[RMDB]
RNA sequence: GGGAACGACUCGAGUAGAGUCGAAAAGUGUCCCUAGAUGAUAAAACACCGCACAUGGCUCGUAAGAGCGGUUAAAUUAGCAAGUAAUGCAAAUUACGCGAGGUAACGCAUGGCCUAGGCUCGUUAGAAAAGGGAGAAUCCUUCGGGAUUCUCCCAACUGUACAGUGUAGUUCGCUACACUGUACAGAAAAGAAACAACAACAACAAC
Reactivity to 2A3 in 0.01 (KOAc 150mM, MgCl2 10mM, bicine 150mM(pH8.5), 24C), signal-to-noise 3, nucleotides 027 to 156: g070u040g060u020c000c000c000u010a080g070a160u120g040a050u110a120a090a020a000c050a050c050c020g060c020a060c040a120u060g080g000c020u000c050g090u110a190a030g030a020g040c020g030g000u030u020a020a100a060u070u050a030g020c100a160a030g040u120a080a040u120g050c080a040a060a140u050u040a060c090g010c000g040a030g030g110u040a030a000c030g030c050a060u070g050g010c000c000u000a000g050g000c000u000c020g010u020u030a080g140a070a150a020a020g000g000g000a010g000a000a000u000c010c000u030u060c110g030g000g000a000u000u000c000u000c010c000c000a000a000
Reactivity to DMS in 0.01 (KOAc 150mM, MgCl2 10mM, bicine 150mM(pH8.5), 24C), signal-to-noise 2, nucleotides 027 to 156: g030u010g020u000c000c000c040u000a080g020a100u000g000a210u000a040a170a100a150c060a040c030c000g000c070a150c130a140u010g040g020c020u000c020g000u000a150a110g000a090g010c000g050g040u010u020a050a070a120u000u010a020g030c030a100a120g030u010a070a080u000g020c130a150a070a130u000u000a060c050g000c050g010a090g020g010u000a060a080c090g030c030a080u000g020g000c000c060u000a110g040g050c030u000c050g000u010u000a110g000a050a070a090a150g010g000g020a020g000a040a030u000c000c010u000u030c290g070g040g000a030u000u010c000u000c000c000c010a000a000
This 207-nucleotide RNA was probed chemically with 2A3 and DMS. The reactions ran in a buffer of 150 mM KOAc, 10 mM MgCl2 and 150 mM bicine (pH 8.5), at 24 C. For DMS, 4,134 sequencing reads were counted. For 2A3 the reverse transcriptase was SuperScript II with manganese.